Conditions: 150 mM KOAc, 10 mM MgCl2 and 150 mM bicine (pH 8.5), 24 C. An RNA of 207 nucleotides, treated with DMS and 2A3 and read out base by base. DMS (dimethyl sulfate) methylates the pairing face of unpaired adenines and cytosines. The 2A3 profile rests on 1,336 reads. The data come from the RNA Mapping Database (RMDB), library OK3TST.
RNA sequence: GGGAACGACUCGAGUAGAGUCGAAAAACGAAGUAAAAAAAGAGUCGGUGGAUGUGGUGAGUUUUCAAAACCCAUUGACAAGUGAAACCGUCACCUAUGACAGUGAUCAGCUUGAACUCGUCGAGGAUGAGCUGGCAGACAUCGGGUUCAUUGAGGCCAUAGUGAGCAAAUUCGUUUGCUCACUAUGAAAAGAAACAACAACAACAAC
Reactivity to DMS in 0.01 (KOAc 150mM, MgCl2 10mM, bicine 150mM(pH8.5), 24C), signal-to-noise 1, nucleotides 027 to 156: a080c100g020a110a140g020u010a000a000a030a140a120a130a180g020a090g000u000c020g010g050u000g010g010a090u010g000u000g000g000u000g030a090g070u000u010u010u000c100a070a040a080a080c050c000c020a090u000u000g010a040c050a030a070g000u010g000a120a050a020c000c010g000u010c030a050c060c040u010a110u000g020a060c040a100g010u010g000a060u000c060a040g020c020u000u010g010a030a080c050u000c040g040u000c070g020a060g000g050a140u000g030a080g090c010u010g020g000c060a030g040a040c050a120u000c000g000g020g020u000u000c040a050u000u000g000a150g000g010c160
Reactivity to 2A3 in 0.01 (KOAc 150mM, MgCl2 10mM, bicine 150mM(pH8.5), 24C), signal-to-noise 2, nucleotides 027 to 156: a010c030g040a060a010g060u140a070a080a050a020a030a070a030g030a010g050u040c010g000g020u040g040g000a060u040g020u010g020g020u080g000a040g030u040u030u030u080c040a060a040a070a100c010c010c010a040u020u080g070a030c060a050a030g010u030g100a080a010a010c000c010g000u010c040a060c030c020u080a120u230g050a050c020a000g010u000g060a130u090c010a010g000c030u040u040g060a090a040c010u030c060g170u110c120g160a070g010g030a050u080g010a030g020c000u000g000g000c020a000g030a050c010a000u030c000g000g030g000u040u080c010a030u040u100g060a040g060g010c020